[RMDB]
This 177-nucleotide RNA was probed chemically with DMS. For DMS, 825 sequencing reads were counted. Conditions: 150 mM KOAc, 10 mM MgCl2 and 150 mM bicine (pH 8.5), 24 C.
RNA sequence: GGGAACGACUCGAGUAGAGUCGAAAAGAUAUGGAUGUCGAAGAUCCGGUGCUUGGAAACUACCCACCCGUGGUUCGGAAACGAACUUACGGAGGUUUCCAAGCACCGGAUUAGACAUCCUAAGUCACUAUCGCUAAGUGUUCGCACUUAGCGAUAGAAAAGAAACAACAACAACAAC
Reactivity to DMS in 0.01 (KOAc 150mM, MgCl2 10mM, bicine 150mM(pH8.5), 24C), signal-to-noise 1, nucleotides 027 to 126: g000a050u010a300u020g000g000a000u000g000u010c010g020a260a300g030a020u020c000c000g000g030u000g020c000u000u020g020g000a030a000a010c000u000a050c080c150c170a300c180c000c000g030u030g000g030u030u000c010g000g000a040a100a300c010g000a010a020c000u010u020a000c000g090g000a120g000g020u000u000u000c000c000a020a030g000c010a010c010c000g000g000a000u000u000a160g000a020c000a000u000c000c000u000a030a090g010u000c000a180